[RMDB]
RNA sequence: GGGAACGACUCGAGUAGAGUCGAAAACGGCGGUCCUUGGACUAAAAGCCCCAAAUCCGGCCAGAAGGGUGCUUGGCUGUUUUGCUUUUGGCAUGGGGGCGUCCCAUAGCUGGUAGGUCCGUUUUGGCGAUAAAUAAUUUUUCGAAAUUAUUUAUCGAAAAGAAACAACAACAACAAC
Reactivity to DMS in 0.01 (KOAc 150mM, MgCl2 10mM, bicine 150mM(pH8.5), 24C), signal-to-noise 6, nucleotides 027 to 126: c040g000g000c040g000g000u000c010c000u010u020g010g000a070c050u010a060a080a100a120g000c000c010c010c040a060a100a090u030c220c070g000g000c010c010a040g010a080a060g000g010g010u030g010c040u010u010g000g000c030u000g000u000u000u000u010g010c010u000u010u010u010g010g000c010a050u010g000g010g000g010g010c040g010u020c020c000c020a110u020a090g010c040u010g000g000u010a060g000g010u000c010c020g000u010u000u010u010g000g010
Reactivity to 2A3 in 0.01 (KOAc 150mM, MgCl2 10mM, bicine 150mM(pH8.5), 24C), signal-to-noise 6, nucleotides 027 to 126: c010g020g000c010g010g000u030c010c010u050u100g070g010a020c010u070a000a030a040a090g040c000c000c000c000a000a110a050u050c040c020g030g000c010c010a020g010a040a040g040g010g020u080g010c010u060u050g040g000c030u010g060u040u080u060u090g060c000u030u020u040u150g010g000c000a040u040g030g000g000g000g020c010g010u050c010c000c000a040u060a030g030c050u050g050g030u040a030g020g000u020c010c000g010u020u020u060u090g070g010

Chemical mapping of a 177-nucleotide RNA with DMS and 2A3.
The RNA was probed in 150 mM KOAc, 10 mM MgCl2 and 150 mM bicine (pH 8.5) at 24 C.
Source: RMDB library OK1LIB, as collected in RNAgym.
Values cover nucleotides 27 to 126.